An RNA of 207 nucleotides, treated with 2A3 and DMS and read out base by base. The reactions ran in a buffer of 150 mM KOAc, 10 mM MgCl2 and 150 mM bicine (pH 8.5), at 24 C. For 2A3, 6,029 sequencing reads were counted. It was measured as part of the RMDB library RNAMAK. 2A3 adducts were read by reverse transcription with SuperScript II with manganese. For DMS the reverse transcriptase was MarathonRT.

RNA sequence: GGGAACGACUCGAGUAGAGUCGAAAAUCCUAAGUCUUGCAACAGCGACCUCACGUAUCGAGAAAUAUCGGAAACGAUAUUUCGAAGACAGUACGUGAGGGUCGACAUGCAAGAUAUGGAAAACUUCUUUCCAAUGAUUCGUCAUUGGAAAGAAGAAGUUUUCUUUUCGUUUCGACGAAAAGAAAACAAAAGAAACAACAACAACAAC
Reactivity to 2A3 in 0.01 (KOAc 150mM, MgCl2 10mM, bicine 150mM(pH8.5), 24C), signal-to-noise 4, nucleotides 027 to 156: u030c010c000u030a120a050g040u000c000u000u050g010c020a120a100c070a280g050c010g010a000c000c000u010c000a000c000g020u010a010u130c030g010a010g010a030a000a000u000a000u000c010g010g050a080a040a050c010g000a000u000a000u000u000u010c000g000a000a000g030a000c030a010g000u010a000c000g000u010g010a060g010g020g000u000c000g020a070c000a040u040g000c000a000a000g000a000u060a070u040g050g000a030a080a060a090c000u010u000c000u000u000u010c000c000a000a000u010g030a020u020u130c260g060u000c110a000u000u010g010g000a000a000a000g000a000a010g000a000a010
Reactivity to DMS in 0.01 (KOAc 150mM, MgCl2 10mM, bicine 150mM(pH8.5), 24C), signal-to-noise 2, nucleotides 027 to 156: u010c010c000u010a110a190g020u000c000u020u090g000c000a060a090c100a270g030c030g000a160c000c010u010c000a010c000g010u010a010u000c040g000a270g040a070a010a020u000a000u000c000g040g000a160a240a220c040g020a040u000a000u000u000u000c000g010a040a200g010a120c300a070g020u000a000c000g030u010g010a010g010g010g020u000c010g030a080c060a300u010g020c030a020a030g030a030u000a160u000g040g000a030a050a140a150c000u000u000c000u000u000u010c000c000a010a060u010g010a030u000u010c300g020u000c000a050u010u000g000g000a000a000a000g000a000a000g010a000a070